Chemical mapping of a 207-nucleotide RNA with 2A3 and DMS. Source: RMDB library M2RFPK, as collected in RNAgym.
RNA sequence: GGGAACGACUCGAGUAGAGUCGAAAACGGCAAAAAAGCAAACUUGACCACCAAGGAUAAAAGAGAUCUUAUCCAAGGAUUCAAAAGAUAAUCUCACUUUUGACACCCACUGAUCUCGAACUUAAAGAAAACCGAGACUACUUCGGUAGUCUCGGAACCCUAACUAAAUCUUCGGAUUUAGUUAGGGAAAAGAAACAACAACAACAAC
Reactivity to 2A3 in 0.01 (KOAc 150mM, MgCl2 10mM, bicine 150mM(pH8.5), 24C), signal-to-noise 5, nucleotides 027 to 156: c010g030g010c010a000a010a030a070a050a070g140c090a130a120a050c070u090u060g060a190c020c010a010c020c020a070a040g000g010a030u020a050a060a020a020g010a010g000a000u010c010u020u020a010u030c020c010a030a020g020g000a050u050u020c010a000a010a010a020g040a060u100a200a180u170c080u050c100a050c020u030u010u000u020g030a030c030a110c040c020c010a050c130u080g000a010u010c010u010c010g010a070a040c050u180u220a060a070a070g070a060a110a030a000c010c000g000a000g000a000c000u000a000c000u000u020c060g060g000u000a000g000u000c000u000c000g000g000a000a000
Reactivity to DMS in 0.01 (KOAc 150mM, MgCl2 10mM, bicine 150mM(pH8.5), 24C), signal-to-noise 1, nucleotides 027 to 156: c110g000g010c000a020a060a070a120a050a130g030c080a130a100a150c030u000u000g020a050c010c020a060c000c030a030a280g050g000a060u010a050a080a100a020g010a130g000a050u000c010u000u000a040u000c070c050a100a220g000g010a220u000u000c000a000a000a030a030g000a080u000a100a080u010c050u000c100a170c010u010u000u000u010g010a040c110a100c030c000c020a180c180u000g040a030u000c020u020c000g000a150a050c080u000u000a180a000a090g000a090a050a120a180c000c000g020a050g000a020c030u000a000c010u010u030c300g070g000u000a020g000u000c010u000c010g010g000a010a020
2A3 adducts were read by reverse transcription with SuperScript II with manganese. The reactions ran in a buffer of 150 mM KOAc, 10 mM MgCl2 and 150 mM bicine (pH 8.5), at 24 C. The 2A3 profile rests on 4,325 reads. For DMS the reverse transcriptase was MarathonRT.